About this RNA: An RNA of 177 nucleotides, treated with 2A3 and read out base by base. Source: RMDB library OK1LIB, as collected in RNAgym. The reactions ran in a buffer of 150 mM KOAc, 10 mM MgCl2 and 150 mM bicine (pH 8.5), at 24 C.

RNA sequence: GGGAACGACUCGAGUAGAGUCGAAAAGCAGGCGCUUCGAGGACGUGAGGACCCCGACGAUCUCCGGGAGCGAGUCCGAGAGGCGUUCGAGACGCUCGCGGUGAACCACGACCGGCUGUUCGUCGAGGGGUAGCGCCAUGUUCGCAUGGCGCUACCCAAAAGAAACAACAACAACAAC
Reactivity to 2A3 in 0.01 (KOAc 150mM, MgCl2 10mM, bicine 150mM(pH8.5), 24C), signal-to-noise 1, nucleotides 027 to 126: g260c200a000g080g000c070g000c000u010u150c130g000a070g000g050a000c000g050u000g070a300g000g210a290c000c000c000c000g000a010c020g000a040u020c070u080c030c000g020g000g000a050g010c080g060a010g030u020c020c000g000a000g000a000g050g120c010g000u000u020c000g000a000g000a000c000g000c000u020c000g030c000g000g000u060g020a020a000c040c000a080c130g110a020c000c020g020g000c150u070g000u010u000c070g040u000c040g020a140g000